[RMDB]
RNA sequence: GGGAACGACUCGAGUAGAGUCGAAAAACGGUCGUACGCGACCGAGGCGCGGCUAGCUCGACGGACCGAACAAUGGCAUCCCGCAUUCUGCCAUCCGCCGCGCAGCUUCUUCUCAAACGGUGCGGAAAAAAGUAGGACACCUUCGGGUGUCCUACAACCGCUACAGAUAGUUCGCUAUCUGUAGCGGAAAAGAAACAACAACAACAAC
Reactivity to 2A3 in 0.01 (KOAc 150mM, MgCl2 10mM, bicine 150mM(pH8.5), 24C), signal-to-noise 2, nucleotides 027 to 156: a000c000g000g010u000c000g000u030a040c270g010c010g070a000c000c020g010a080g020g020c010g020c010g000g020c010u050a020g040c000u010c060g070a080c090g120g060a070c030c040g010a030a030c050a040a020u060g000g000c000a020u130c050c000c010g020c010a010u150u100c010u080g000c000c000a010u070c050c060g000c000c000g000c010g000c010a010g020c030u140u090c000u070u050c020u040c060a070a110a050c100g000g000u000g010c010g000g000a020a000a010a010a010a040g000u030a010g000g010a010c000a000c020c010u090u100c270g020g030g000u000g000u010c000c000u010a000c000a000a020